Structure probing data (2A3) for a 177-nucleotide construct.
RNA sequence: GGGAACGACUCGAGUAGAGUCGAAAAAUCACUGUCUUGGGUUUCAUGUCUGGUGAGAAGCUUGGCCGAUACUGAAACUCAUACAUGUAGGUGGAGGCUCCAGCAUCUGCAAAGACAUGGAUUCAUGGACGGAAUUAACAUUCGUGUUAAUUCCGUCAAAAGAAACAACAACAACAAC
Reactivity to 2A3 in 0.01 (KOAc 150mM, MgCl2 10mM, bicine 150mM(pH8.5), 24C), signal-to-noise 3, nucleotides 027 to 126: a010u090c030a020c090u070g090u090c020u050u040g060g010g000u030u130u250c010a000u010g010u000c010u040g060g050u130g140a080g020a050a010g010c010u050u040g020g000c010c010g010a010u010a030c010u010g010a070a060a030c070u110c100a030u120a050c070a020u150g000u010a010g030g000u000g010g000a030g000g000c030u020c080c030a010g000c010a020u000c010u030g030c030a150a110a000g010a000c010a000u000g000g000a010u020u020c020a030u080g110

The data come from the RNA Mapping Database (RMDB), library OK2TST. The RNA was probed in 150 mM KOAc, 10 mM MgCl2 and 150 mM bicine (pH 8.5) at 24 C.